[RMDB]
This 177-nucleotide RNA was probed chemically with DMS and 2A3.
Source: RMDB library TTRDES, as collected in RNAgym.
For DMS, 4,282 sequencing reads were counted.
Values are in units of 0.01, from 0 to 300, in steps of 10.
RNA sequence: GGGAACGACUCGAGUAGAGUCGAAAAGAUAUGGAAUCCGUAGGGAGAGUACGUUCGGAAACGAACGAAUACUCGAGGAUCUACAGGAUUCCUAAGUCAAAGCAAGCUGCCGUUCGCGGCAGCUUGCCAGUCUUAGAUUCUUCGGAAUCUAAGACUGAAAAGAAACAACAACAACAAC
Reactivity to DMS in 0.01 (KOAc 150mM, MgCl2 10mM, bicine 150mM(pH8.5), 24C), signal-to-noise 2, nucleotides 027 to 126: g000a020u000a040u020g000g000a010a000u000c000c000g040u000a020g000g000g010a010g000a020g020u000a040c000g000u000u000c000g020g000a010a010a030c000g020a000a010c020g000a150a160u000a010c000u000c000g000a080g020g000a020u010c000u000a010c020a220g010g010a010u000u010c000c000u000a000a070g000u000c010a090a120a200g000c000a010a030g030c000u000g020c000c000g030u000u020c260g010c000g000g020c000a000g010c000u000u000g010c010
Reactivity to 2A3 in 0.01 (KOAc 150mM, MgCl2 10mM, bicine 150mM(pH8.5), 24C), signal-to-noise 1, nucleotides 027 to 126: g010a010u000a010u060g000g000a000a000u030c010c010g000u000a010g030g000g000a030g000a000g020u010a000c020g000u000u010c010g000g000a010a010a010c000g000a000a000c020g000a110a150u110a050c010u010c010g020a110g040g000a010u020c000u000a020c090a110g040g000a010u010u020c000c000u000a000a000g000u010c020a090a010a040g030c020a020a000g030c040u000g000c030c070g040u140u210c300g010c050g070g000c030a000g000c000u020u000g000c000